[RMDB]
RNA sequence: GGGAACGACUCGAGUAGAGUCGAAAAUGGGAUCAAAUCAAAGGCACAGUGAACUCCUCAUAGCAUCUUCUUUGGAAUUACUCAGGAACCAGAACUUUUUACACAAAUGUAAGAAAUUCUACCAAGGAUGAAGAUAGCAAUUCGUUGCUAUCUUCAUAAAAGAAACAACAACAACAAC
Reactivity to DMS in 0.01 (KOAc 150mM, MgCl2 10mM, bicine 150mM(pH8.5), 24C), signal-to-noise 7, nucleotides 027 to 126: u030g000g010g010a070u020c060a050a080a130u010c080a040a090a090g010g020c030a040c030a070g020u010g010a050a110c080u000c050c020u000c060a070u010a060g020c070a050u010c040u010u000c030u000u000u020g010g000a080a050u010u000a040c050u020c060a070g020g010a080a080c130c060a010g010a020a020c030u000u000u000u000u000a010c010a090c190a080a070a080u030g010u000a030a020g000a000a020a060u000u000c020u000a130c090c100a060a080g010g010
Reactivity to 2A3 in 0.01 (KOAc 150mM, MgCl2 10mM, bicine 150mM(pH8.5), 24C), signal-to-noise 7, nucleotides 027 to 126: u070g000g010g030a040u060c070a030a080a040u040c030a060a070a070g040g000c020a010c020a050g040u050g080a060a040c020u020c030c020u050c040a050u080a060g030c020a060u020c020u120u000c000u040u050u040g020g030a060a040u100u030a090c040u040c080a050g030g010a040a030c040c020a010g010a010a020c010u030u030u010u030u040a030c040a020c020a080a210a140u160g000u020a030a000g010a010a020a010u050u010c010u030a080c020c030a050a030g080g010